[RMDB]
RNA sequence: GGGAACGACUCGAGUAGAGUCGAAAAGGUGCUUCAAAAGAAGGAGAUCCGCGACUUAAUUGAGAAGAGCGCCACUGCGACUGCCGCGAAAGCCGAGGCAGAGGCCCACGGCCCGUCCUCCACUCAGUGAAGUAGAGAUAUUCGUAUCUCUACUUCAAAAAGAAACAACAACAACAAC
Reactivity to DMS in 0.01 (KOAc 150mM, MgCl2 10mM, bicine 150mM(pH8.5), 24C), signal-to-noise 8, nucleotides 027 to 126: g010g020u000g010c020u010u000c040a080a110a100a130g010a100a060g020g000a100g000a090u000c030c030g010c040g010a080c040u000u010a070a180u000u010g000a160g010a120a110g000a100g010c070g010c030c030a060c090u010g000c050g010a110c030u000g000c020c030g010c040g010a090a100a100g020c090c050g010a090g000g010c030a060g010a080g010g010c030c020c040a070c080g010g010c020c020c020g000u000c010c010u000c030c030a080c100u000c070a090g010
Reactivity to 2A3 in 0.01 (KOAc 150mM, MgCl2 10mM, bicine 150mM(pH8.5), 24C), signal-to-noise 5, nucleotides 027 to 126: g010g000u050g030c000u060u050c020a090a110a080a120g090a050a050g050g020a060g000a060u050c040c020g020c010g060a040c030u090u110a080a140u140u130g050a060g010a180a060g010a040g030c040g030c030c010a030c040u070g020c020g050a060c050u040g010c030c040g030c030g060a160a040a000g030c060c010g000a040g040g000c020a030g040a050g130g020c010c020c010a070c010g050g000c000c010c010g030u030c000c000u000c010c000a050c020u070c020a080g060